Background:
The record gives the reactivity of an RNA of 207 nucleotides to DMS. It was measured as part of the RMDB library OK3TST. Reactivities are given for positions 27 through 156. The RNA was probed in 150 mM KOAc, 10 mM MgCl2 and 150 mM bicine (pH 8.5) at 24 C.

[RMDB]
RNA sequence: GGGAACGACUCGAGUAGAGUCGAAAAUUAUCUCUUUUGAGAUAACUAUAUGUGUGCAUAUAGAACCCCAAUUAACAUUGCAAAGGGGCUCUACACCUAUUAUCUGGUGUAGAGAAAACACGGUGUAGUUUUUUUUUUACGCUUGUGAGGCAAUGAAGUGGGUGGGAUUGUUCGCGGUCUCGUUUACAAAAGAAACAACAACAACAAC
Reactivity to DMS in 0.01 (KOAc 150mM, MgCl2 10mM, bicine 150mM(pH8.5), 24C), signal-to-noise 2, nucleotides 027 to 156: u010u000a010u020c010u000c000u000u000u010u030g010a020g010a030u000a020a300c010u000a070u000a030u010g020u000g030u000g010c050a050u000a060u010a040g010a110a160c050c000c000c040a070a120u010u010a090a140c030a010u000u000g010c010a090a080a150g010g030g000g030c000u010c010u000a010c000a010c010c010u000a110u000u000a090u000c140u000g010g030u010g020u010a010g000a010g000a020a030a040a070c000a020c010g000g030u010g020u010a050g000u000u010u000u000u000u010u000u000u000u000a020c010g010c020u020u040g040u000g010a160g010g010c010a020a030u000g010a080a090